RNA sequence: GGGAACGACUCGAGUAGAGUCGAAAAGAAGGGUGAAAGCCCUUGAUAAUGUAGUGGAAAUUAUAAAUAAGAAGAGUUCUGAGUUGCUUAAGCAGAACUAAAAUAAAAAGACAAGCAUUAUUACAAACAUGGCGAGGUAAGUUCGCUUACCUCGCAAUCAUCGUUAAUAGUUCGCUAUUAACGAUGAAAAAGAAACAACAACAACAAC
Reactivity to DMS in 0.01 (KOAc 150mM, MgCl2 10mM, bicine 150mM(pH8.5), 24C), signal-to-noise 1, nucleotides 027 to 156: g000a070a070g060g050g010u000g000a150a120a300g000c000c020c010u000u010g000a070u000a030a070u040g020u000a070g120u010g040g000a140a100a110u000u010a000u000a070a080a100u000a070a130g020a090a150g010a130g030u000u000c050u020g030a090g000u000u000g020c070u030u000a040a080g000c050a030g000a010a050c000u010a020a030a070a140u000a020a090a210a120a180g030a090c030a030a040g050c000a040u000u000a050u000u000a040c130a090a020a030c070a030u020g060g000c000g040a010g010g020u000a020a030g030u000u010c290g040c000u000u010a000c000c010u010c000g040c000a000a040
Reactivity to 2A3 in 0.01 (KOAc 150mM, MgCl2 10mM, bicine 150mM(pH8.5), 24C), signal-to-noise 3, nucleotides 027 to 156: g020a010a010g000g000g000u020g020a040a030a030g000c000c000c010u000u000g030a030u020a120a030u070g090u090a050g040u050g010g030a090a030a090u090u090a000u200a290a110a020u200a070a040g060a040a050g030a010g060u020u000c020u010g020a030g060u100u060g130c040u100u060a070a020g030c010a000g000a010a000c050u040a010a030a010a020u100a010a130a010a000a010g030a010c040a010a010g000c010a010u050u010a040u050u150a190c110a030a090a010c060a060u140g070g000c010g000a000g000g000u000a000a010g010u040u070c130g010c030u000u000a000c000c010u010c000g000c000a000a000
An RNA of 207 nucleotides, treated with DMS and 2A3 and read out base by base. For 2A3, 2,059 sequencing reads were counted.